Structure probing data (2A3 and DMS) for a 177-nucleotide construct. The reactions ran in a buffer of 150 mM KOAc, 10 mM MgCl2 and 150 mM bicine (pH 8.5), at 24 C. Source: RMDB library M2PK50, as collected in RNAgym. For 2A3, 5,036 sequencing reads were counted.
[RMDB]
RNA sequence: GGGAACGACUCGAGUAGAGUCGAAAAACCUAUGGAUUCGUCCAUAGGUGCUGGCGCGCGGCCUUUGUCCUGUCGCGUGUGCGUGGUGGGCGAUAAACGCGCAAUAGUGACAAUUCGUUGUCACUAAGUAAGGAGAGCAAUUCGUUGCUCUCCUUACAAAAGAAACAACAACAACAAC
Reactivity to 2A3 in 0.01 (KOAc 150mM, MgCl2 10mM, bicine 150mM(pH8.5), 24C), signal-to-noise 2, nucleotides 027 to 126: a000c010c000u000a010u000g000g000a010u020u110c190g040u010c090c000a000u000a010g000g000u020g070c080u030g060g070c050g000c000g000c010g030g050c030c000u040u020u100g080u070c000c010u020g030u040c000g010c040g050u140g130u170g130c050g000u010g040g040u030g000g010g000c010g000a010u040a080a120a010c010g000c000g000c000a000a100u100a050g000u000g000a000c010a010a030u060u060c250g080u120u000g000u000c010a000c010u020a080a020
Reactivity to DMS in 0.01 (KOAc 150mM, MgCl2 10mM, bicine 150mM(pH8.5), 24C), signal-to-noise 4, nucleotides 027 to 126: a010c000c000u000a000u000g000g000a030u020u010c160g010u010c000c000a010u010a000g010g010u000g010c100u010g010g030c090g000c010g010c020g010g010c030c120u000u010u000g000u020c020c030u000g010u000c010g020c010g020u010g020u020g030c030g050u000g000g000u000g010g010g000c020g010a040u000a070a070a090c060g010c020g010c040a150a120u000a020g000u000g000a010c000a010a030u000u010c200g010u000u000g010u000c000a010c000u000a010a070